[RMDB]
RNA sequence: GGGAACGACUCGAGUAGAGUCGAAAAGCCAAAGCAGGAGGAUUGCUUUGAACCCAGGCUGGUCUCAUCUCGAACUCCUGUGGUCAAAUCAACUUCCUAUCCCAGGAGUUUGAGACCAGCCUAGGCAACAUGGUGAAACCUCAUCUCUAUGAAAAAACGUAAAAUAUACUUUCGAGUAUAUUUUACGAAAAGAAACAACAACAACAAC
Reactivity to 2A3 in 0.01 (KOAc 150mM, MgCl2 10mM, bicine 150mM(pH8.5), 24C), signal-to-noise 5, nucleotides 027 to 156: g030c000c010a070a030a030g070c080a030g020g080a010g040g020a120u080u060g000c000u070u000u050g010a040a040c000c000c000a000g000g000c000u020g000g000u000c000u020c020a130u070c090u080c120g050a030a020c000u000c000c000u030g080u240g030g020u070c080a030a070a170u100c040a060a160c050u230u100c020c050u090a110u090c000c010c000a000g000g000a010g000u010u040u050g000a010g000a000c010c010a000g000c000c000u000a000g000g000c030a050a030c010a040u040g020g010u080g050a090a050a060c010c040u040c030a130u040c020u000c040u090a130u200g060a120a060a040a140a020a030
Reactivity to DMS in 0.01 (KOAc 150mM, MgCl2 10mM, bicine 150mM(pH8.5), 24C), signal-to-noise 1, nucleotides 027 to 156: g000c090c010a070a080a110g080c030a000g010g010a040g060g020a300u000u000g030c060u000u000u020g000a250a060c010c000c000a030g030g030c020u000g000g030u010c000u040c020a120u020c140u000c170g000a160a060c010u000c040c010u000g040u020g040g020u000c080a050a100a130u000c090a070a140c100u000u010c030c040u010a110u010c010c020c010a110g000g020a050g000u000u000u000g010a060g010a010c000c000a050g010c010c000u000a010g000g010c030a060a130c050a050u010g040g020u010g030a070a050a110c010c060u000c050a060u010c090u000c040u000a090u010g000a000a060a080a130a110a230

About this RNA: Structure probing data (2A3 and DMS) for a 207-nucleotide construct.